[RMDB]
RNA sequence: GGGAACGACUCGAGUAGAGUCGAAAACUCACUCACUACGGUGAGUGAGAAUCUUAAGGCUCAAUAAAGCUUGCCUUGAGGUCCCUCAAGCAGAUAUAGACUGAAACAUUUAGUACUAUCAAGCAGGGAGCAACGGCUCGAGUACGCUCGAGCCGAAAUGACGAUUUAGUUUCGACUAAAUCGUCAUAAAAGAAACAACAACAACAAC
Reactivity to 2A3 in 0.01 (KOAc 150mM, MgCl2 10mM, bicine 150mM(pH8.5), 24C), signal-to-noise 3, nucleotides 027 to 156: c000u000c000a000c000u000c000a010c010u060a030c250g070g000u000g000a000g000u000g000a000g010a010a010u030c010u000u010a000a000g000g020c000u010c130a090a220u180a270a110a040g090c120u100u120g000c010c000u000u000g010a000g000g030u000c010c030c020u020c060a050a030g000c010a000g080a020u060a060u110a050g050a040c010u040g040a070a190a030c060a070u030u070u160a020g010u040a180c010u000a010u050c020a080a000g000c000a030g030g000g060a040g080c060a100a050c020g000g020c000u010c000g010a010g000u040a020c200g020c050u000c000g000a000g000c020c010g010a020a020
Reactivity to DMS in 0.01 (KOAc 150mM, MgCl2 10mM, bicine 150mM(pH8.5), 24C), signal-to-noise 2, nucleotides 027 to 156: c000u000c000a020c020u020c010a030c000u010a050c290g120g040u000g010a020g040u000g010a020g010a020a050u000c000u000u000a030a050g020g010c020u000c150a030a170u000a090a120a210g010c090u010u030g020c000c010u010u040g000a030g020g010u000c050c020c020u000c070a120a130g000c050a140g020a100u000a070u000a110g000a050c030u020g010a040a140a200c110a100u010u000u000a030g010u000a070c070u000a100u000c010a120a160g030c040a080g010g040g010a170g020c030a100a210c000g010g100c000u000c000g000a020g040u000a130c250g070c030u000c000g020a010g060c000c010g000a020a000

This 207-nucleotide RNA was probed chemically with 2A3 and DMS. For 2A3, 1,957 sequencing reads were counted. For DMS, 2,297 sequencing reads were counted. High 2A3 reactivity points to a flexible backbone, as in loops and unpaired stretches.